[RMDB]
RNA sequence: GGGAACGACUCGAGUAGAGUCGAAAAGAUAUGGAACCAUAAUCGCGAUAAGCUGGCAUCGGAAACGAUGCCCAGCUUUUGACGCGGAUAUGGUUCCUAAGUCAAAAUCCAUCCUUCGGGAUGGAAAGUACCAACCUACGUUCGCGUAGGUUGGUACAAAAGAAACAACAACAACAAC
Reactivity to 2A3 in 0.01 (KOAc 150mM, MgCl2 10mM, bicine 150mM(pH8.5), 24C), signal-to-noise 1, nucleotides 027 to 126: g010a000u020a030u130g020g010a000a000c020c000a000u000a040a070u030c010g000c080g120a170u100a300a010g000c000u010g020g010c010a020u000c010g060g000a010a020a020c010g000a010u000g020c000c000c000a020g000c020u040u000u050u100g090a080c080g000c020g030g000a000u000a000u000g010g000u000u010c000c000u000a010a000g010u020c000a020a000a010a210u000c000c010a020u000c000c020u030u170c300g190g000g000a010u020g000g000a060a050a020
Reactivity to DMS in 0.01 (KOAc 150mM, MgCl2 10mM, bicine 150mM(pH8.5), 24C), signal-to-noise 1, nucleotides 027 to 126: g000a010u000a290u010g000g000a000a010c000c000a010u000a030a050u000c000g010c020g000a200u010a000a010g020c000u020g000g000c000a020u000c010g010g000a060a040a090c000g020a000u000g000c200c080c010a000g010c000u000u000u000u000g000a130c150g010c000g020g040a040u000a000u000g010g000u000u000c010c000u000a010a050g000u000c020a120a080a160a180u000c000c010a000u000c000c000u000u010c230g010g000g000a010u000g000g000a010a020a090

Chemical mapping of a 177-nucleotide RNA with 2A3 and DMS. For 2A3 the reverse transcriptase was SuperScript II with manganese. Conditions: 150 mM KOAc, 10 mM MgCl2 and 150 mM bicine (pH 8.5), 24 C. For DMS, 1,402 sequencing reads were counted.